Source: RMDB libraries RFM100 and RFMREP, as collected in RNAgym.
This 177-nucleotide RNA was probed chemically with 2A3 and DMS.
For 2A3 the reverse transcriptase was SuperScript II with manganese.
For DMS the reverse transcriptase was MarathonRT.

[RMDB]
RNA sequence: GGGAACGACUCGAGUAGAGUCGAAAAUCGAUGCCCAAUCGUUAAAAGAAGUGAUAAUACUUUUAACGUGUAGGAAGGCGUGAAGGUAACAUUGAAGAUUCAGUGUGAACUGGAUUGAAGUUGCCUUCAUGGCCCUCUAGUUCGCUAGAGGGCCAUGAAAAGAAACAACAACAACAAC
Reactivity to 2A3 in 0.01 (KOAc 150mM, MgCl2 10mM, bicine 150mM(pH8.5), 24C), signal-to-noise 1, nucleotides 027 to 126: u190c020g050a110u180g020c000c000c020a000a110u070c000g000u000u000a000a000a000a000g080a010a080g080u060g250a180u230a300a020u070a070c000u000u000u000u000a040a000c040g080u030g090u080a090g000g230a070a060g080g000c010g090u080g050a000a000g000g000u000a000a000c060a050u060u150g080a000a040g050a020u000u010c000a000g000u040g000u020g250a060a040c000u000g040g050a000u000u080g010a040a000g000u000u000g030c020c010u000u030
Reactivity to DMS in 0.01 (KOAc 150mM, MgCl2 10mM, bicine 150mM(pH8.5), 24C), signal-to-noise 2, nucleotides 027 to 126: u000c070g000a120u000g070c010c000c020a130a090u010c000g020u000u000a010a010a020a000g000a130a090g000u040g010a170u030a170a130u050a090c000u000u000u000u000a010a000c000g000u000g070u020a090g000g030a090a080g040g020c060g030u000g000a020a040g000g000u000a000a020c000a110u030u000g020a170a280g000a010u000u000c000a000g000u000g020u040g000a120a000c040u000g000g000a000u000u010g000a090a090g030u000u000g000c000c000u000u000